An RNA of 177 nucleotides, treated with 2A3 and read out base by base.
The 2A3 profile rests on 360 reads.
Values cover nucleotides 27 to 126.
Source: RMDB library OK1LIB, as collected in RNAgym.
The RNA was probed in 150 mM KOAc, 10 mM MgCl2 and 150 mM bicine (pH 8.5) at 24 C.
[RMDB]
RNA sequence: GGGAACGACUCGAGUAGAGUCGAAAAGAUUCUAGGCGAAUGAUAUAAGGGAAUCGUGAUGUCUCAGGAAGAACAUGACUUAAAGCUUUCUCAGCUAAUUUCCCAUGUCCAAUUUCACGUCUUCCUGGGUCCGCGCAGUAUUCGUACUGCGCGGACCAAAAGAAACAACAACAACAAC
Reactivity to 2A3 in 0.01 (KOAc 150mM, MgCl2 10mM, bicine 150mM(pH8.5), 24C), signal-to-noise 1, nucleotides 027 to 126: g010a020u100u070c090u080a060g020g000c070g000a000a130u010g260a090u000a000u000a200a170g010g000g060a010a010u090c080g000u040g210a010u050g040u010c000u000c000a000g050g000a000a050g000a050a070c020a070u020g030a100c000u070u000a040a050a050g000c000u000u200u080c100u010c000a000g000c000u000a020a020u030u060u000c000c000c000a070u100g010u130c010c010a090a100u060u030u300c060a000c030g060u040c000u110u080c100c040u020g000